[RMDB]
RNA sequence: GGGAACGACUCGAGUAGAGUCGAAAAACAACCGCUAGCUAACAAAGUCAUCGCCUUAGAAGAUGCCGUCGUCCAGCCGCGGCGGGACAACACGGCGGACCAAGUGGCCACGCUGGUGUCUCACUUAGUGAACGUGGGGGCCAUCACCGCGGCGGAGCCAACUUUCGAGUUUCGACUCGAAAGUUGGAAAAGAAACAACAACAACAAC
Reactivity to 2A3 in 0.01 (KOAc 150mM, MgCl2 10mM, bicine 150mM(pH8.5), 24C), signal-to-noise 1, nucleotides 027 to 156: a010c050a030a030c000c000g040c040u040a040g000c020u080a120a100c050a150a070a000g050u100c020a060u100c090g010c030c000u130u130a050g020a130a000g040a140u080g020c010c000g000u030c000g030u040c060c050a010g050c030c000g000c010g000g010c030g020g000g010a030c030a090a010c030a070c050g030g000c000g030g000a050c040c010a190a060g020u080g090g010c030c010a070c060g090c100u130g050g000u080g070u010c020u010c020a020c010u010u170a090g050u110g160a090a030c060g000u010g040g020g000g000g030c000c000a030u040c040a020c010c010g000c000g050g020c010g000g000a000g020